[RMDB]
RNA sequence: GGGAACGACUCGAGUAGAGUCGAAAAGAUAUGGAGCCACCGACAUGCUGGAUAAGGGUCGGAAACGACCCGUAACAGCAACAGCGUUGGCUCCUAAGUCAAAUCCUGUUGCUUCGGCAACAGGAAACACCAGAAUUAAGUUCGCUUAAUUCUGGUGAAAAGAAACAACAACAACAAC
Reactivity to DMS in 0.01 (KOAc 150mM, MgCl2 10mM, bicine 150mM(pH8.5), 24C), signal-to-noise 7, nucleotides 027 to 126: g000a040u000a300u000g000g010a010g000c000c010a000c050c000g010a060c120a220u000g010c010u000g000g010a090u000a090a160g000g000g010u000c010g010g000a040a100a180c000g000a010c000c000c000g010u000a060a230c010a010g010c010a020a070c240a100g000c030g000u010u000g010g000c000u000c000c000u000a010a070g010u010c020a130a130a150u010c010c000u010g010u000u000g010c000u000u010c200g020g010c000a000a000c000a010g000g000a000a020a100
Reactivity to 2A3 in 0.01 (KOAc 150mM, MgCl2 10mM, bicine 150mM(pH8.5), 24C), signal-to-noise 3, nucleotides 027 to 126: g030a020u070a050u150g010g000a000g010c000c000a010c040c000g080a130c080a110u090g000c000u010g000g010a020u010a040a040g010g000g000u010c010g010g000a050a060a030c010g010a000c000c000c000g000u010a020a010c010a000g010c010a010a010c040a020g090c010g010u030u020g000g010c000u000c000c000u000a060a010g020u000c020a040a000a190u000c000c000u010g010u010u000g000c000u040u060c190g170g000c000a000a000c000a000g000g020a010a010a000
The record gives the reactivity of an RNA of 177 nucleotides to DMS and 2A3.
It was measured as part of the RMDB library TTRDEL.
2A3 adducts were read by reverse transcription with SuperScript II with manganese.